[RMDB]
RNA sequence: GGGAACGACUCGAGUAGAGUCGAAAAGAUAUGGACAGAUGAGCUUUUGACGGAAUGUCGGAAACGACUUCCGAUAAGCUCACUGUCCUAAGUCAAACAUCUCGAUCGCUUCGGCGAUCGAGAUGAACAGUUUAGUUUAGUUCGCUAAACUAAACUGAAAAGAAACAACAACAACAAC
Reactivity to DMS in 0.01 (KOAc 150mM, MgCl2 10mM, bicine 150mM(pH8.5), 24C), signal-to-noise 6, nucleotides 027 to 126: g000a020u000a150u000g000g000a020c000a000g000a120u000g010a010g010c000u000u000u000u010g010a300c050g010g000a020a010u010g020u010c000g020g000a030a030a070c000g010a010c010u000u000c000c000g000a050u010a020a020g020c000u000c000a010c000u000g000u000c000c000u000a000a050g000u000c010a150a140a290c010a010u000c000u000c000g010a010u000c000g000c000u000u010c210g030g000c000g010a010u000c000g010a000g000a000u000g000a040a150
Reactivity to 2A3 in 0.01 (KOAc 150mM, MgCl2 10mM, bicine 150mM(pH8.5), 24C), signal-to-noise 7, nucleotides 027 to 126: g000a010u020a020u070g010g010a000c010a010g300a300u020g000a020g010c020u100u260u300u300g120a060c000g000g060a040a070u300g010u010c010g000g010a040a020a000c000g000a000c000u000u000c010c000g020a040u080a080a000g000c000u000c000a000c000u000g000u000c000c000u000a000a000g000u000c010a060a080a060c000a010u000c010u010c020g000a010u000c000g000c020u070u150c300g140g000c000g010a000u000c010g010a000g000a000u000g000a000a010
Structure probing data (DMS and 2A3) for a 177-nucleotide construct. The data come from the RNA Mapping Database (RMDB), library TTRDEL.